[RMDB]
RNA sequence: GGGAACGACUCGAGUAGAGUCGAAAAGGAACAGAUGGGGUUCUACCUUCGUGAGGGGAACUACAUCGAACAUGGCCCUUAACUAAUCUCCGGGAGGGAGGGUAAAUGGAUUUCUACAAGAUUAAGGAACGUCGAACCAAGGAAGGAGUCAUUGAGGUGUAUCUUUUGCGUUCGCGCAAAAGAUACAAAAAGAAACAACAACAACAAC
Reactivity to 2A3 in 0.01 (KOAc 150mM, MgCl2 10mM, bicine 150mM(pH8.5), 24C), signal-to-noise 2, nucleotides 027 to 156: g090g010a040a040c050a120g000a020u050g000g010g000g150u080u070c050u190a300c030c000u220u180c220g240u130g120a030g050g000g000g000a000a000c000u040a000c000a020u000c050g040a040a010c020a050u060g030g000c010c010c000u070u060a030a000c030u030a030a090u050c020u030c110c040g040g030g040a090g050g000g040a030g070g000g020u130a090a060a030u070g000g040a060u080u130u000c030u040a070c010a160a000g120a140u050u260a050a040g030g000a010a010c140g000u060c050g040a080a080c030c100a030a010g000g000a020a020g000g000a030g050u030c010a010u030u080g080a010g000g000
Conditions: 150 mM KOAc, 10 mM MgCl2 and 150 mM bicine (pH 8.5), 24 C. Structure probing data (2A3) for a 207-nucleotide construct. Values cover nucleotides 27 to 156.